[RMDB]
RNA sequence: GGGAACGACUCGAGUAGAGUCGAAAACAAAGUGGACGCUCUUUAUCACAACAAUAUGGGCGUUAUUGAUGGCUGGAGGAGUUGUGAGGUUCAAAGAAGUCAACAAUGUUCGAGAUCAUUUCAGUGAGAGUAUGAGGACUUUCGAGUCCUCAUACUCAAAAGAAACAACAACAACAAC
Reactivity to DMS in 0.01 (KOAc 150mM, MgCl2 10mM, bicine 150mM(pH8.5), 24C), signal-to-noise 2, nucleotides 027 to 126: c050a050a090a270g010u000g020g010a020c010g000c090u000c010u000u000u010a060u000c080a100c110a010a070c060a090a050u000a020u000g020g020g000c030g030u000u000a260u050u000g000a140u000g010g010c040u000g020g000a130g020g010a170g000u000u000g010u010g010a040g000g000u000u000c060a060a090a060g000a040a120g010u010c010a030a010c090a040a200u020g010u000u000c070g010a160g000a110u010c100a060u010u010u000c050a100g010u020g000a160
Reactivity to 2A3 in 0.01 (KOAc 150mM, MgCl2 10mM, bicine 150mM(pH8.5), 24C), signal-to-noise 2, nucleotides 027 to 126: c010a000a040a020g100u110g090g000a030c020g060c060u070c010u090u130u020a070u170c040a010c000a130a080c010a040a110u080a060u120g050g060g000c000g000u010u020a050u060u140g120a090u100g050g000c030u030g050g090a060g070g010a120g020u000u000g060u040g020a080g020g030u060u110c010a040a020a060g060a060a010g010u030c020a010a020c020a080a130u080g030u020u080c030g030a020g020a190u080c040a110u040u130u050c010a020g020u000g090a140